[RMDB]
RNA sequence: GGGAACGACUCGAGUAGAGUCGAAAAGAUAGUCCUUGAAUCCAACUCCUUGUGCAAAAGGGACGACUGAAGACAGGUGCUGGAAUCAAUUUCCUCUUGAAGAGUGUGAAGCAUUUCAGCUUCCAUGACCUAGCGUAGAUUUCGAUCUACGCUAGGUAAAAGAAACAACAACAACAAC
Reactivity to 2A3 in 0.01 (KOAc 150mM, MgCl2 10mM, bicine 150mM(pH8.5), 24C), signal-to-noise 2, nucleotides 027 to 126: g080a120u210a020g050u020c020c000u010u030g010a010a030u000c010c020a010a020c030u050c050c050u080u150g060u110g100c050a000a140a100a000g020g010g070a080c080g030a040c020u040g020a060a010g050a050c020a010g000g010u030g000c000u010g000g000a010a030u020c000a000a010u040u040u000c010c000u020c040u090u100g180a190a140g120a060g070u070g040u090g040a010a000g000c020a010u020u210u180c050a030g030c020u080u040c020c010a030u070g040
Reactivity to DMS in 0.01 (KOAc 150mM, MgCl2 10mM, bicine 150mM(pH8.5), 24C), signal-to-noise 4, nucleotides 027 to 126: g010a130u020a100g030u000c070c060u020u000g010a100a090u010c030c010a080a110c040u010c030c020u000u010g050u000g030c120a090a060a150a100g000g010g010a120c140g010a180c060u020g000a120a120g000a090c050a050g010g010u000g010c030u000g000g000a030a070u000c040a050a070u000u000u000c020c000u010c070u000u000g010a120a090g010a140g020u000g000u010g010a020a030g010c030a150u010u000u000c190a140g000c000u000u000c010c010a050u010g000